Record summary: Chemical mapping of a 177-nucleotide RNA with 2A3 and DMS. For DMS the reverse transcriptase was MarathonRT. Values cover nucleotides 27 to 126. 2A3 adducts were read by reverse transcription with SuperScript II with manganese. Source: RMDB library OK1LIB, as collected in RNAgym. The RNA was probed in 150 mM KOAc, 10 mM MgCl2 and 150 mM bicine (pH 8.5) at 24 C.
[RMDB]
RNA sequence: GGGAACGACUCGAGUAGAGUCGAAAAGAACGAGCCAUCAUGAAAGCUUCGUUGGUUCGAUGUGAAAGUGAUGGCAAUGUGGAUUUUUUUAUCCACGGCUUCGCAGAACCAAUGCGUUUUGCUCGGAGGGAUAUCUAAUGUUCGCAUUAGAUAUCCCAAAAGAAACAACAACAACAAC
Reactivity to 2A3 in 0.01 (KOAc 150mM, MgCl2 10mM, bicine 150mM(pH8.5), 24C), signal-to-noise 4, nucleotides 027 to 126: g130a070a010c090g000a010g010c010c000a030u050c010a000u120g070a110a060a030g040c020u050u040c030g050u060u110g070g050u200u130c020g020a070u030g050u000g080a190a090a030g010u020g030a040u050g050g000c110a020a060u080g000u000g000g010a020u050u000u000u040u030u140u300a030u000c020c000a000c000g020g000c060u110u050c050g000c020a020g000a020a030c030c010a060a140u150g010c010g010u000u030u060u080g050c050u000c070g030g020a110
Reactivity to DMS in 0.01 (KOAc 150mM, MgCl2 10mM, bicine 150mM(pH8.5), 24C), signal-to-noise 3, nucleotides 027 to 126: g010a040a090c130g000a100g000c020c000a010u000c010a040u000g000a110a130a300g010c030u020u010c020g060u000u000g030g030u070u000c010g000a050u010g020u040g020a130a130a250g000u010g000a030u000g010g000c020a090a050u080g060u000g010g010a000u000u000u040u030u010u050u000a020u000c000c000a000c000g010g000c120u010u000c070g000c070a080g000a070a050c020c040a060a050u020g020c260g000u010u000u000u030g010c000u000c050g000g000a300